Description: The record gives the reactivity of an RNA of 177 nucleotides to DMS and 2A3. The reactions ran in a buffer of 150 mM KOAc, 10 mM MgCl2 and 150 mM bicine (pH 8.5), at 24 C. The data come from the RNA Mapping Database (RMDB), library OK2TRN. For DMS the reverse transcriptase was MarathonRT.

RNA sequence: GGGAACGACUCGAGUAGAGUCGAAAAAUCUAGCCUAUUCAAGGUUUUUCAUGCCAGCAACACAUUGUCAAAUUUAAAUAACAGCUCAAUUUUGAAAAACUGGGGCUCUUCUAAUGUGUAGGCCAAGCCCUACACGCAUAUUCGUAUGCGUGUAGGGAAAAGAAACAACAACAACAAC
Reactivity to DMS in 0.01 (KOAc 150mM, MgCl2 10mM, bicine 150mM(pH8.5), 24C), signal-to-noise 1, nucleotides 027 to 126: a070u020c060u020a110g030c030c030u000a090u010u010c130a090a110g010g000u000u000u000u000u000c030a070u000g000c030c060a140g000c040a050a070c050a090c160a020u000u030g000u000c050a050a120a130u000u000u010a100a090a130u020a130a090c100a030g010c030u010c030a040a050u000u000u000u000g000a080a070a050a170a070c130u000g030g020g040g030c080u010c150u000u000c040u030a030a020u010g010u000g000u000a040g000g000c060c170a070a120g020
Reactivity to 2A3 in 0.01 (KOAc 150mM, MgCl2 10mM, bicine 150mM(pH8.5), 24C), signal-to-noise 1, nucleotides 027 to 126: a000u030c030u000a000g070c000c090u030a070u060u120c080a060a080g040g000u050u010u000u130u030c080a070u110g080c010c080a020g020c000a040a020c020a020c000a060u060u140g050u160c050a020a120a270u160u220u210a090a220a100u120a160a020c030a000g000c020u000c030a000a100u020u100u090u140g120a160a180a000a030a080c020u040g010g000g120g000c060u040c000u090u000c020u010a060a000u060g020u020g000u050a030g000g120c020c000a090a000g020